[RMDB]
Chemical mapping of a 207-nucleotide RNA with 2A3.
2A3 is a SHAPE reagent: it acylates the 2'-hydroxyl of flexible nucleotides of all four kinds.
The reactions ran in a buffer of 150 mM KOAc, 10 mM MgCl2 and 150 mM bicine (pH 8.5), at 24 C.
The 2A3 profile rests on 3,289 reads.
2A3 adducts were read by reverse transcription with SuperScript II with manganese.
RNA sequence: GGGAACGACUCGAGUAGAGUCGAAAACUGCCGCCGGGACGCAGUGAUCCUCGCAGGGUCGCACGGUCGCCUCGGCUCGGCCUCGUGUCGGCUCGACCUGCGAGGGGAGCGAGUGGCGAGCCCGACCAAAACUUUCUCGCCUUCGGGCGAGAAAGAAGCAUCAUUUACAGUUCGCUGUAAAUGAUGCAAAAGAAACAACAACAACAAC
Reactivity to 2A3 in 0.01 (KOAc 150mM, MgCl2 10mM, bicine 150mM(pH8.5), 24C), signal-to-noise 3, nucleotides 027 to 156: c020u060g050c020c050g040c020c020g080g080g040a040c010g030c010a140g130u000g010a010u000c000c000u000c010g000c000a010g020g000g050u060c010g000c020a050c060g030g040u050c000g000c010c020u060c040g050g020c000u010c030g040g020c010c050u080c120g080u070g120u130c050g010g000c030u040c090g110a090c000c000u000g000c000g000a010g000g010g000g000a010g000c000g010a070g060u130g030g010c000g000a020g010c000c050c010g050a050c020c040a020a050a020a080c000u000u000u000c000u000c000g000c010c010u030u030c140g040g000g020c020g000a000g000a000a000a000g000a000a010